An RNA of 177 nucleotides, treated with 2A3 and DMS and read out base by base.
Conditions: 150 mM KOAc, 10 mM MgCl2 and 150 mM bicine (pH 8.5), 24 C.
RNA sequence: GGGAACGACUCGAGUAGAGUCGAAAAUGAUGUCUCUGGUGUUUGUAAAUAUAAGGGUAAGUUUGUCCAAAUCCCUGCUCAGUGUGUCCGUGACCCUGUGGGAUUUUGUUUGUCAAAUACCCCCUGUACUAUUCUAUAACUUCGGUUAUAGAAUAGUAAAAGAAACAACAACAACAAC
Reactivity to 2A3 in 0.01 (KOAc 150mM, MgCl2 10mM, bicine 150mM(pH8.5), 24C), signal-to-noise 2, nucleotides 027 to 126: u100g010a030u070g060u020c020u000c000u080g020g030u010g040u040u200u050g050u040a080a100a040u180a040u030a070a050g000g000g020u010a060a040g050u060u070u030g000u010c010c000a000a030a010u020c010c010c000u030g070c050u040c010a020g030u000g030u070g020u150c070c100g120u120g030a020c010c010c010u030g000u060g020g010g000a000u030u030u030u090g050u100u070u070g030u010c000a000a060a000u040a040c010c050c000c000c000u010g000u010
Reactivity to DMS in 0.01 (KOAc 150mM, MgCl2 10mM, bicine 150mM(pH8.5), 24C), signal-to-noise 5, nucleotides 027 to 126: u000g010a120u010g010u000c020u010c020u010g030g020u010g010u000u010u010g010u000a030a060a080u010a060u010a120a080g010g010g000u000a080a180g010u010u000u000g010u000c020c020a030a050a060u000c000c010c010u010g020c190u020c030a030g020u010g020u010g010u010c020c210g020u010g000a050c020c010c010u000g010u010g000g010g010a030u000u000u000u000g010u010u010u000g020u000c020a010a020a040u000a300c100c060c000c020c020u000g010u010
High 2A3 reactivity points to a flexible backbone, as in loops and unpaired stretches. For DMS the reverse transcriptase was MarathonRT. For DMS, 5,263 sequencing reads were counted. Values cover nucleotides 27 to 126.